[RMDB]
RNA sequence: GGGAACGACUCGAGUAGAGUCGAAAAGAUAUGGACCCAUCCUCCGGUGCAUCGAUCUCGGAAACGAGGGAGCACCUGAGGAGUGGGUCCUAAGUCAAACUUAGCAACGGUUCGCCGUUGCUAAGAAGGAGAUAUAUGUCUUCGGACAUAUAUCUCCAAAAGAAACAACAACAACAAC
Reactivity to 2A3 in 0.01 (KOAc 150mM, MgCl2 10mM, bicine 150mM(pH8.5), 24C), signal-to-noise 3, nucleotides 027 to 126: g030a020u090a050u140g000g000a010c000c010c000a010u010c000c000u010c020c030g000g000u010g000c030a260u300c130g110a120u030c010u000c010g030g070a110a090a070c020g010a010g010g030g000a020g000c010a000c010c000u000g000a000g000g010a000g030u060g010g010g000u000c000c000u000a010a000g000u020c040a040a010a100c000u000u010a000g000c000a000a010c010g000g090u040u070c300g050c090c000g000u000u020g000c000u000a000a000g000a010a060
Reactivity to DMS in 0.01 (KOAc 150mM, MgCl2 10mM, bicine 150mM(pH8.5), 24C), signal-to-noise 4, nucleotides 027 to 126: g010a050u000a300u000g000g000a010c000c000c000a090u000c000c000u000c010c140g010g020u000g020c010a300u000c140g010a050u010c000u000c000g000g010a120a110a170c010g010a020g000g000g000a020g000c000a010c000c000u000g000a000g000g000a040g020u000g010g020g010u000c000c000u000a010a050g010u000c040a080a140a260c000u000u000a010g000c000a000a000c010g000g000u010u020c270g030c000c000g000u000u000g000c000u000a000a000g000a080a140

Structure probing data (2A3 and DMS) for a 177-nucleotide construct. It was measured as part of the RMDB library TTRDEL. The RNA was probed in 150 mM KOAc, 10 mM MgCl2 and 150 mM bicine (pH 8.5) at 24 C. The 2A3 profile rests on 11,539 reads.